[RMDB]
RNA sequence: GGGAACGACUCGAGUAGAGUCGAAAAACGGUCGUACGCGACCGAGGCGCGCCUAGGUCGACGGACCGAACAAUGGCAUCCCGCAUUCUGCCAUCCGCCGCGCAGCUUCUUCUCAAACGGUGCGGAAAAAAGUAGGACACCUUCGGGUGUCCUACAAGCUUCAAUGAUUCUUCGGAAUCAUUGAAGCAAAAGAAACAACAACAACAAC
Reactivity to 2A3 in 0.01 (KOAc 150mM, MgCl2 10mM, bicine 150mM(pH8.5), 24C), signal-to-noise 1, nucleotides 027 to 156: a010c020g000g010u000c010g040u060a050c240g000c010g130a000c000c000g010a010g000g020c040g000c020g020c010c010u000a010g020g000u010c020g130a110c110g130g010a000c020c000g000a010a000c020a000a030u010g010g010c010a020u150c070c010c000g010c000a020u300u040c020u050g000c010c000a020u010c030c040g010c000c000g000c010g010c040a060g030c050u150u030c020u070u020c020u030c020a120a100a030c050g000g000u020g000c020g000g000a170a000a000a000a000a000g000u010a020g000g000a000c000a000c010c000u100u090c170g050g020g000u000g000u000c000c000u000a000c000a000a000